[RMDB]
RNA sequence: GGGAACGACUCGAGUAGAGUCGAAAAACCUCAGUCUUCGGACUGAGGUGAGCGGAGCAUGGUGGGCGUGGGAACUCCUCCUUGGUGACAAGGGCCCACGGGGUGCGGCACGCUUCGGCGUGCCGAAUAAUCUUGUACUAUUCGUAGUACAAGAUUAAAAAGAAACAACAACAACAAC
Reactivity to 2A3 in 0.01 (KOAc 150mM, MgCl2 10mM, bicine 150mM(pH8.5), 24C), signal-to-noise 3, nucleotides 027 to 126: a000c000c000u000c000a000g010u000c000u020u140c210g140g000a010c000u000g000a000g010g010u010g010a020g030c090g030g030a060g030c120a110u120g030g040u070g050g040g010c030g020u020g000g040g010a060a050c050u050c030c010u040c010c000u030u030g050g010u090g020a040c010a010a020g020g000g000c000c000c000a000c000g020g010g000g010u070g030c000g010g020c000a000c000g020c000u020u060c150g080g000c020g010u000g010c030c000g010a000a010
Reactivity to DMS in 0.01 (KOAc 150mM, MgCl2 10mM, bicine 150mM(pH8.5), 24C), signal-to-noise 5, nucleotides 027 to 126: a030c000c000u000c000a010g000u000c000u000u010c190g030g010a010c000u000g010a010g000g010u000g000a050g010c130g000g000a110g010c070a080u000g020g020u000g000g000g010c050g020u000g010g010g000a100a080c080u010c070c070u010c010c000u000u000g000g000u010g000a180c040a010a020g000g000g010c010c010c000a030c030g010g000g010g010u000g010c020g010g000c000a020c000g010c000u000u010c090g020g020c010g000u000g000c000c000g000a010a040

This 177-nucleotide RNA was probed chemically with 2A3 and DMS. For 2A3, 7,452 sequencing reads were counted. As a SHAPE reagent, 2A3 marks flexible, mostly unpaired nucleotides at the ribose 2'-OH.